[RMDB]
RNA sequence: GGGAACGACUCGAGUAGAGUCGAAAACAGAGGAAUUAAUGCAAGCGCGUGAAACUGGAAUAUUGCCUCCGAAAGAUAUUAAGUUUCGCGGUGAAAUUUACGGGGCGCGGCCUUUUGGCAUCACAGGGAUCGGAUUUACCAGUAACGGGAAAGCAGAUCAUGAAACACAGUUCGCUGUGUUUCAUGAAAAAGAAACAACAACAACAAC
Reactivity to 2A3 in 0.01 (KOAc 150mM, MgCl2 10mM, bicine 150mM(pH8.5), 24C), signal-to-noise 1, nucleotides 027 to 156: c000a000g080a060g030g070a080a050u160u110a110a050u280g060c050a050a060g060c060g000c020g090u060g000a000a030a000c040u070g050g050a060a050u020a010u080u090g040c000c020u110c110c000g120a130a090a020g020a020u100a020u030u140a070a050g020u020u010u030c000g030c020g070g000u050g060a140a040a000u060u120u060a090c060g010g000g000g000c040g020c010g050g080c020c010u000u200u120u020g040g000c000a020u090c020a090c030a020g050g000g030a000u010c020g000g000a020u010u080u080a120c040c010a020g020u000a050a000c070g030g000g000a000a020a000g030c050a000g020a050